[RMDB]
An RNA of 177 nucleotides, treated with 2A3 and DMS and read out base by base. It was measured as part of the RMDB library M2PK90. High DMS reactivity at an A or C suggests that its Watson-Crick edge is free. 2A3 adducts were read by reverse transcription with SuperScript II with manganese. For 2A3, 6,297 sequencing reads were counted. Conditions: 150 mM KOAc, 10 mM MgCl2 and 150 mM bicine (pH 8.5), 24 C. Reactivities are rounded to 0.1 and cut off at 0 and 3.

RNA sequence: GGGAACGACUCGAGUAGAGUCGAAAAGAAAAUAGCGUAAUGGACAUUGAGAAUGUACGCUAAGUGUGUGUUGUAUAAAUAACGUCCAAUUGAACACACACACAGUUGGACCUAAUGUCCAAAAAAACAUCAUUGAGAUGUUCGCAUCUCAAUGAUGAAAAGAAACAACAACAACAAC
Reactivity to 2A3 in 0.01 (KOAc 150mM, MgCl2 10mM, bicine 150mM(pH8.5), 24C), signal-to-noise 4, nucleotides 027 to 126: g120a010a080a020a050u080a010g000c020g010u030a040a060u050g030g000a000c010a020u040u060g020a030g040a150a110u150g000u070a010c020g010c020u030a100a080g000u010g010u000g000u000g020u040u110g110u080a090u110a230a140a040u140a050a060c070g090u000c040c020a010a010u040u060g070a060a000c000a000c000a000c000a000c010a000c000a040g070u120u100g030g010a010c000c010u030a040a020u050g000u000c010c010a040a040a000a000a000a020a000
Reactivity to DMS in 0.01 (KOAc 150mM, MgCl2 10mM, bicine 150mM(pH8.5), 24C), signal-to-noise 4, nucleotides 027 to 126: g010a110a080a090a130u000a020g010c000g010u000a030a060u000g020g010a030c010a030u010u000g010a090g010a080a090u000g010u000a010c020g010c000u000a030a130g010u000g020u010g010u010g000u010u010g020u000a070u010a060a040a070u000a060a070c120g000u000c060c050a040a060u000u000g000a050a020c020a000c000a000c000a010c010a040c050a050g010u000u000g010g010a080c010c050u000a070a040u000g000u000c000c020a000a000a030a080a060a030a090